[RMDB]
RNA sequence: GGGAACGACUCGAGUAGAGUCGAAAAAUGAAUGGCGUCAGGAACUGCCGCUGAUCGAAGAAUGGCUGCAGUUCGUCGGCGAGAAGCUGCCGACCGGUGUCAAAGAUGAGUUCGACGCCCUGAAGGAAUACAGGACCAUCUUCGGAUGGUCCUGUAUAAAAGAAACAACAACAACAAC
Reactivity to DMS in 0.01 (KOAc 150mM, MgCl2 10mM, bicine 150mM(pH8.5), 24C), signal-to-noise 2, nucleotides 027 to 126: a090u000g010a110a090u030g000g010c000g000u020c010a080g020g000a000a010c020u010g000c010c030g020c000u000g040a080u020c060g010a170a100g020a080a050u030g000g000c040u010g000c010a010g010u000u000c010g010u000c010g000g010c030g000a140g020a140a120g020c150u010g000c000c000g000a010c020c070g020g000u010g000u010c070a100a140a060g020a050u000g000a150g000u000u010c130g010a040c000g000c040c010c050u010g000a100a070g020g000a260
Reactivity to 2A3 in 0.01 (KOAc 150mM, MgCl2 10mM, bicine 150mM(pH8.5), 24C), signal-to-noise 3, nucleotides 027 to 126: a000u260g010a050a110u150g070g000c050g150u030c030a000g190g000a010a000c000u010g030c000c030g000c020u090g060a090u110c230g190a160a010g070a250a030u220g010g000c000u000g000c030a000g000u010u020c000g000u000c000g000g000c050g010a020g040a120a010g020c120u150g000c020c000g020a040c000c020g070g000u050g040u030c010a050a150a070g130a190u100g040a040g090u120u200c070g020a000c030g030c000c000c000u030g000a050a010g000g090a100